[RMDB]
RNA sequence: GGGAACGACUCGAGUAGAGUCGAAAAGGCCUUGGGACUAUCCUCGCGCUGAGCCACCGCGCUCUCGUUUUCGUUAGAUGACUCAGCUGAGGAAGCGAUGGCGGUGCCUACAGAUGAGAUAAGGAAAAUUUUAGUGAGUGUUCGCACUCACUAAAAUAAAAGAAACAACAACAACAAC
Reactivity to 2A3 in 0.01 (KOAc 150mM, MgCl2 10mM, bicine 150mM(pH8.5), 24C), signal-to-noise 2, nucleotides 027 to 126: g080g030c010c020u070u110g120g010g040a110c010u100a130u290c000c020u000c010g020c010g000c030u010g000a000g010c000c030a010c030c010g020c010g030c040u010c010u030c100g070u100u050u170u060c030g000u020u070a030g000a100u060g020a040c030u000c080a000g000c030u040g000a000g000g040a020a010g020c000g010a040u040g030g010c010g000g040u050g010c000c010u030a060c050a040g070a080u140g040a050g020a120u160a100a140g060g030a100a100a040
Reactivity to DMS in 0.01 (KOAc 150mM, MgCl2 10mM, bicine 150mM(pH8.5), 24C), signal-to-noise 2, nucleotides 027 to 126: g010g020c030c020u000u010g000g010g010a150c060u010a110u000c020c000u000c050g010c150g020c020u000g000a050g000c090c010a020c030c020g020c030g010c160u000c110u010c130g010u000u000u000u000c020g030u010u000a090g020a060u010g000a070c040u000c030a070g010c010u010g000a040g000g000a070a040g000c030g000a070u010g010g000c030g000g020u000g010c090c010u000a100c070a050g010a100u020g000a080g000a110u010a050a100g000g000a090a070a090